[RMDB]
RNA sequence: GGGAACGACUCGAGUAGAGUCGAAAAUGGCCAAAGAUGUUUCAAAAGGUAAUGCAAUUAAAGCGUUAUGUCACAAAUUGGGAUAUUCGGUGGAUCAAGUCAUUGCUUUUGGUGAUAGUAUGAAUGAACGCAGCUGUAAGUUCGCUUACAGCUGCGUAAAAGAAACAACAACAACAAC
Reactivity to 2A3 in 0.01 (KOAc 150mM, MgCl2 10mM, bicine 150mM(pH8.5), 24C), signal-to-noise 1, nucleotides 027 to 126: u050g070g000c000c000a070a030a030g040a100u050g010u000u030u050c050a110a060a040a020g060g010u010a060a000u030g080c020a040a120u140u040a170a100a040g000c000g000u030u030a010u120g120u140c010a020c050a230a190a110u080u020g010g030g030a020u020a060u180u170c070g030g040u050g000g000a020u100c030a030a030g030u040c040a050u020u020g000c060u040u090u210u230g070g070u040g010a050u070a070g150u070a110u140g080a200a000u040g070a000
Reactivity to DMS in 0.01 (KOAc 150mM, MgCl2 10mM, bicine 150mM(pH8.5), 24C), signal-to-noise 2, nucleotides 027 to 126: u030g020g000c020c020a070a090a050g010a050u000g000u000u000u000c030a040a020a140a110g020g010u000a020a020u010g000c000a080a100u010u010a040a140a110g010c000g030u000u000a010u010g020u010c090a110c150a020a090a100u010u010g010g020g000a030u000a030u000u000c060g010g070u000g020g000a080u010c070a070a080g000u000c030a060u000u000g010c050u020u000u010u010g030g020u000g000a030u000a060g000u020a080u000g010a080a110u010g000a100

The record gives the reactivity of an RNA of 177 nucleotides to 2A3 and DMS. For 2A3, 715 sequencing reads were counted. DMS adducts were read by reverse transcription with MarathonRT. 2A3 adducts were read by reverse transcription with SuperScript II with manganese. The reactions ran in a buffer of 150 mM KOAc, 10 mM MgCl2 and 150 mM bicine (pH 8.5), at 24 C. Source: RMDB library OK2TRN, as collected in RNAgym.